[RMDB]
RNA sequence: GGGAACGACUCGAGUAGAGUCGAAAAGUCAACCAAGAGCUGAAUAAAGGUAAUUUGUUCUUAUUUGUUGUGCCCAAAGGCUUUAAAACAAAUUAUGUCAUCGUCAGCGAGCAACAGAUGCAGCUACGAUAUACUGGGUCUUCGGACCCAGUAUAUCAAAAGAAACAACAACAACAAC
Reactivity to 2A3 in 0.01 (KOAc 150mM, MgCl2 10mM, bicine 150mM(pH8.5), 24C), signal-to-noise 1, nucleotides 027 to 126: g000u050c000a000a080c020c010a050a000g010a000g020c070u080g070a090a040u140a120a080a000g140g020u010a030a000u000u060u010g030u000u050c060u040u050a150u140u050u070g060u070u010g060u240g020c030c000c070a070a040a040g050g000c000u120u150u080a020a010a010a000c030a050a010a000u050u000a020u050g160u100c020a050u050c030g020u010c030a010g000c020g000a040g010c030a000a070c000a140g090a090u050g000c000a030g060c040u120a010c050
Reactivity to DMS in 0.01 (KOAc 150mM, MgCl2 10mM, bicine 150mM(pH8.5), 24C), signal-to-noise 3, nucleotides 027 to 126: g010u000c100a100a250c050c080a100a080g010a170g000c010u010g010a030a060u000a120a080a080g010g010u000a030a030u010u000u000g010u000u010c140u010u000a070u010u000u010g010u010u000g020u020g000c030c020c070a080a080a140g000g010c020u000u000u000a010a020a020a020c030a000a010a020u000u020a010u000g000u010c050a050u010c110g010u010c010a040g000c020g010a070g020c040a060a070c110a090g000a070u010g010c070a040g020c080u010a090c140